The data come from the RNA Mapping Database (RMDB), library OK2TRN. This 177-nucleotide RNA was probed chemically with DMS and 2A3. The 2A3 profile rests on 3,780 reads. The RNA was probed in 150 mM KOAc, 10 mM MgCl2 and 150 mM bicine (pH 8.5) at 24 C. For 2A3 the reverse transcriptase was SuperScript II with manganese.
RNA sequence: GGGAACGACUCGAGUAGAGUCGAAAAGGGGAGCAUAGAGGAAUGUCUAACAAGAACAAUCAGAGAUCAUCCACAGGGAGUAUAGAGCACUAUGUGUGAUGAUGUUCACAUUGUGCAUAUUAAAACAAAUAAGCUAGACAUUCGUGUCUAGCUUAUUAAAAGAAACAACAACAACAAC
Reactivity to DMS in 0.01 (KOAc 150mM, MgCl2 10mM, bicine 150mM(pH8.5), 24C), signal-to-noise 8, nucleotides 027 to 126: g010g000g000g010a080g020c080a060u010a060g020a060g020g000a080a060u000g010u000c040u010a090a090c190a090a090g010a070a060c080a060a070u000c100a130g000a070g000a040u000c040a050u010c020c030a050c070a050g000g010g010a100g020u000a100u000a070g010a150g010c030a040c020u000a040u000g020u000g010u000g010a050u000g000a070u010g000u000u000c010a040c070a020u000u000g010u000g000c040a070u000a080u000u000a030a060a060a070c180a060
Reactivity to 2A3 in 0.01 (KOAc 150mM, MgCl2 10mM, bicine 150mM(pH8.5), 24C), signal-to-noise 4, nucleotides 027 to 126: g010g000g000g000a020g040c040a040u050a070g080a020g060g060a080a040u040g040u050c040u060a080a050c050a090a060g040a050a030c040a040a040u100c040a020g030a010g000a060u030c010a020u030c010c020a040c020a030g030g050g030a040g040u040a090u100a190g170a020g040c010a000c050u080a070u090g020u000g030u050g030a050u030g020a030u100g130u090u040c020a020c010a040u000u040g030u040g000c030a010u040a100u170u220a050a060a030a020c030a010